[RMDB]
RNA sequence: GGGAACGACUCGAGUAGAGUCGAAAACAAGCAAAUAUCUCUAGAGGGGAUUAAUCCCUCUGCUUCAAAGUAACCAAAACAAAGAAAGCUGAGCCAGCUUUGCUGGGUACCACACCUGUCCUGCAGAGUACACGUUGGACUUCGGUCCAACGUGUACAAAAGAAACAACAACAACAAC
Reactivity to 2A3 in 0.01 (KOAc 150mM, MgCl2 10mM, bicine 150mM(pH8.5), 24C), signal-to-noise 1, nucleotides 027 to 126: c010a000a070g020c030a060a030a220u070a180u020c050u040c060u230a000g000a000g020g000g100g070a240u140u170a100a110u230c000c020c000u000c000u000g000c020u010u070c010a110a020a090g070u070a090a090c060c000a050a000a000a150c040a040a130a030g040a120a000a000g040c060u000g000a010g140c040c000a000g000c040u050u120u200g070c000u000g000g000g000u070a050c000c000a060c000a000c010c000u020g000u000c000c000u000g000c000a000g020a000